[RMDB]
RNA sequence: GGGAACGACUCGAGUAGAGUCGAAAAUAAUGCUUUGAAGAAGUUUCCUGUUUUCAAUGGUCGUUAUGACAAGGAACGCAACCUAAUUGUGUUAAACAAGGAUGUUAACGUAGGUAUUGCCGUGGACCAGCGAUCUAUCUUUCGAGAUAGAUCGCUGAAAAGAAACAACAACAACAAC
Reactivity to 2A3 in 0.01 (KOAc 150mM, MgCl2 10mM, bicine 150mM(pH8.5), 24C), signal-to-noise 1, nucleotides 027 to 126: u100a000a010u080g020c010u230u070u130g130a100a080g140a050a030g060u000u020u010c010c000u020g060u010u050u030u010c060a120a070u060g150g000u020c060g020u080u120a070u120g000a030c060a050a030g010g000a040a030c020g030c010a000a000c000c000u070a100a170u110u180g050u050g000u160u110a090a000a040c060a080a070g200g000a150u200g020u090u020a000a050c050g000u000a020g000g010u070a130u030u120g050c080c070g000u030g040g040a010c050
Reactivity to DMS in 0.01 (KOAc 150mM, MgCl2 10mM, bicine 150mM(pH8.5), 24C), signal-to-noise 2, nucleotides 027 to 126: u010a040a130u010g030c040u000u000u000g020a130a090g000a040a150g000u000u000u000c030c010u000g010u020u000u000u000c040a070a160u010g010g020u010c010g020u000u010a010u000g000a080c050a090a060g020g000a110a070c070g020c070a020a010c050c020u020a120a130u010u000g010u000g010u000u000a050a070a040c020a070a100g010g020a120u000g000u000u000a100a070c030g000u000a050g010g010u000a070u000u010g000c010c060g040u000g000g000a030c130